Background: The data come from the RNA Mapping Database (RMDB), library OK2TRN. Chemical mapping of a 177-nucleotide RNA with 2A3 and DMS. The reactions ran in a buffer of 150 mM KOAc, 10 mM MgCl2 and 150 mM bicine (pH 8.5), at 24 C. High DMS reactivity at an A or C suggests that its Watson-Crick edge is free. Values cover nucleotides 27 to 126.

RNA sequence: GGGAACGACUCGAGUAGAGUCGAAAAAUUGGUGUGCGAAUUUCGUGAGCGAUAUCCGCUGAGAAAUUGGACUGGCGGGUAAAGACAUCCUCAAUACGCUCGAUCAUAUGGUUGAACGACAGUACCACCUGCUGUGUGAAUUCGUUCACACAGCAGGAAAAGAAACAACAACAACAAC
Reactivity to 2A3 in 0.01 (KOAc 150mM, MgCl2 10mM, bicine 150mM(pH8.5), 24C), signal-to-noise 1, nucleotides 027 to 126: a000u120u040g060g000u020g000u040g040c040g000a000a060u030u000u120c130g030u080g030a030g030c000g000a020u030a000u040c020c030g000c010u030g040a060g050a090a210a160u190u220g000g140a060c040u000g030g040c000g010g060g000u030a040a020a020g110a020c040a080u080c000c040u190c050a020a050u080a040c040g000c080u000c040g080a130u040c020a070u030a010u300g040g000u010u070g030a090a030c040g110a020c050a040g080u030a050c000c000a010
Reactivity to DMS in 0.01 (KOAc 150mM, MgCl2 10mM, bicine 150mM(pH8.5), 24C), signal-to-noise 1, nucleotides 027 to 126: a080u010u000g030g040u000g000u000g000c000g010a040a060u000u000u010c180g000u010g000a050g000c030g000a220u000a010u000c010c030g030c010u020g010a130g020a030a100a120u000u000g000g000a300c060u000g000g010c010g000g000g030u000a030a040a160g000a070c130a070u000c040c060u000c040a100a120u000a110c080g010c010u000c010g040a060u000c040a060u010a040u020g050g060u000u000g000a080a060c050g020a110c130a040g020u000a060c050c040a100